[RMDB]
RNA sequence: GGGAACGACUCGAGUAGAGUCGAAAAGAUAUGGAUGACUGUAGAGGUGUUGUGUAAGUCGGAAACGAUUGAGCAACACUACCCACCUACAAUCAUCCUAAGUCAAAGAGCAGGUUCGCCUGCUCAAGUAAUACGGGACGUUCGCGUCCCGUAUUACAAAAGAAACAACAACAACAAC
Reactivity to 2A3 in 0.01 (KOAc 150mM, MgCl2 10mM, bicine 150mM(pH8.5), 24C), signal-to-noise 1, nucleotides 027 to 126: g020a010u050a000u160g000g010a000u010g020a000c020u020g000u020a000g000a010g040g020u000g000u000u000g040u030g090u190a060a070g040u010c000g010g010a030a070a040c000g010a010u050u090g030a050g000c000a010a000c000a010c000u030a020c010c020c000a030c010c000u000a000c000a000a010u000c000a010u000c010c000u010a130a020g040u010c040a070a040a110g000a000g010c020a000g010g060u070u180c220g160c070c000u010g040c020u000c000a000a000
Reactivity to DMS in 0.01 (KOAc 150mM, MgCl2 10mM, bicine 150mM(pH8.5), 24C), signal-to-noise 2, nucleotides 027 to 126: g000a060u020a300u030g020g010a030u010g010a040c020u000g010u000a000g020a080g030g010u010g000u010u010g020u000g000u020a260a110g040u010c000g000g000a050a080a140c000g000a040u000u000g020a300g000c000a010a000c010a020c020u000a020c060c030c100a300c140c000u000a010c010a040a030u000c000a000u010c000c010u000a000a080g000u000c040a060a110a130g000a020g030c000a010g010g050u000u020c200g010c000c020u000g000c000u000c000a000a060